[RMDB]
RNA sequence: GGGAACGACUCGAGUAGAGUCGAAAAAAGAGUUUCUCUGUUCUCUAAAAUAAAAACAGAGUGGUGGAGUCAUUAUGACCCUCUUAGAGUUUCCAGUUUCUCUAAAAAACUGGUGGCGAGCCUGCCCAAAAUCAUUAGACCUUCGGGUCUAAUGAAAGUGACAUAUGUUGUUCGCAACAUAUGUCACAAAAGAAACAACAACAACAAC
Reactivity to 2A3 in 0.01 (KOAc 150mM, MgCl2 10mM, bicine 150mM(pH8.5), 24C), signal-to-noise 1, nucleotides 027 to 156: a010a010g010a000g000u000u000u000c000u000c000u000g000u020u000c000u010c000u020a150a220a120a140u090a020a000a080a020a000c000a000g000a000g000u000g030g010u010g010g020a270g020u000c010a010u000u300a050u300g000a000c010c030c000u020c020u050u110a030g000a000g020u000u000u010c000c000a000g000u010u000u000c000u020c040u060a050a060a000a000a000a000c000u000g000g000u010g010g000c010g000a000g110c000c110u040g000c000c000c000a070a180a000a040u010c000a000u000u000a000g000a000c000c000u000u060c280g090g010g000u000c000u010a000a000u000g000a010a000a010

Chemical mapping of a 207-nucleotide RNA with 2A3. It was measured as part of the RMDB library M2RFPK. Reactivities are given for positions 27 through 156. The reactions ran in a buffer of 150 mM KOAc, 10 mM MgCl2 and 150 mM bicine (pH 8.5), at 24 C.